[RMDB]
Chemical mapping of a 177-nucleotide RNA with DMS and 2A3. DMS adducts were read by reverse transcription with MarathonRT. The reactions ran in a buffer of 150 mM KOAc, 10 mM MgCl2 and 150 mM bicine (pH 8.5), at 24 C. For 2A3, 763 sequencing reads were counted.
RNA sequence: GGGAACGACUCGAGUAGAGUCGAAAAUCGGAGAGGUCGCCGACCGGGCAUGGGAGGCCCACGUCGCCGGGGCCACCGAAGUAUGCAUGCAGGGCGGUAUCGAUCCCGAGCUACCGGUCACCGGCUAAAACCAAAGAGGGUUCGCCCUCUUUGGUUUAAAAGAAACAACAACAACAAC
Reactivity to DMS in 0.01 (KOAc 150mM, MgCl2 10mM, bicine 150mM(pH8.5), 24C), signal-to-noise 2, nucleotides 027 to 126: u000c010g000g010a100g000a190g020g030u000c080g050c040c020g000a050c020c000g010g010g020c030a020u000g000g020g010a120g040g020c010c010c010a060c120g020u000c100g000c110c030g010g010g010g000c010c000a070c030c010g000a090a070g000u000a070u000g020c030a020u000g010c030a130g000g000g010c010g020g010u020a050u000c050g000a110u020c050c000c020g000a080g020c140u000a120c020c010g000g010u000c070a140c070c020g000g000c090u000a060
Reactivity to 2A3 in 0.01 (KOAc 150mM, MgCl2 10mM, bicine 150mM(pH8.5), 24C), signal-to-noise 1, nucleotides 027 to 126: u070c010g070g010a040g010a050g120g060u050c090g080c030c000g010a030c030c020g040g140g000c010a020u050g090g000g000a070g020g000c000c010c030a100c080g190u190c090g000c080c130g000g000g030g040c050c000a010c000c010g000a070a030g120u190a050u220g050c020a000u040g010c070a020g050g040g000c050g050g000u050a060u100c020g030a040u040c000c010c000g010a040g000c050u070a030c000c030g000g030u170c110a070c130c020g030g000c000u130a100